[RMDB]
An RNA of 177 nucleotides, treated with DMS and 2A3 and read out base by base. For DMS the reverse transcriptase was MarathonRT. For 2A3 the reverse transcriptase was SuperScript II with manganese.
RNA sequence: GGGAACGACUCGAGUAGAGUCGAAAAAAUAACCUCAUGACGAUCUGCGGACAGCGGGUUGCCAUCGGGUUCCAGCACGAUAAAGGUAUCCAUCGCCAUACCGUCGCGAGUGGUGAAAAUUUGUGCGCAGGGGUACUACAUUCGUGUAGUACCCCUGAAAAGAAACAACAACAACAAC
Reactivity to DMS in 0.01 (KOAc 150mM, MgCl2 10mM, bicine 150mM(pH8.5), 24C), signal-to-noise 3, nucleotides 027 to 126: a090a040u030a030a020c010c000u010c300a010u000g000a020c000g000a010u000c010u000g000c010g000g010a130c300a170g000c000g030g010g020u000u000g010c000c030a000u000c300g000g000g010u000u000c100c020a140g010c010a020c000g010a040u000a060a070a100g010g010u030a100u000c010c000a050u000c010g000c010c110a130u020a100c210c240g000u000c140g000c010g000a080g030u000g020g000u000g000a060a060a090a110u000u000u000g030u000g000c030g020
Reactivity to 2A3 in 0.01 (KOAc 150mM, MgCl2 10mM, bicine 150mM(pH8.5), 24C), signal-to-noise 2, nucleotides 027 to 126: a000a010u200a020a030c010c000u000c010a010u010g030a000c000g010a000u000c020u030g010c010g110g140a150c080a100g000c000g010g060g000u010u000g000c000c000a050u030c080g030g010g000u020u040c040c030a030g030c030a000c010g030a010u060a110a190a020g150g010u060a050u000c000c000a020u020c000g000c000c010a090u110a240c050c060g090u120c010g010c010g030a080g190u080g000g030u030g020a010a000a010a090u030u070u110g030u020g010c040g000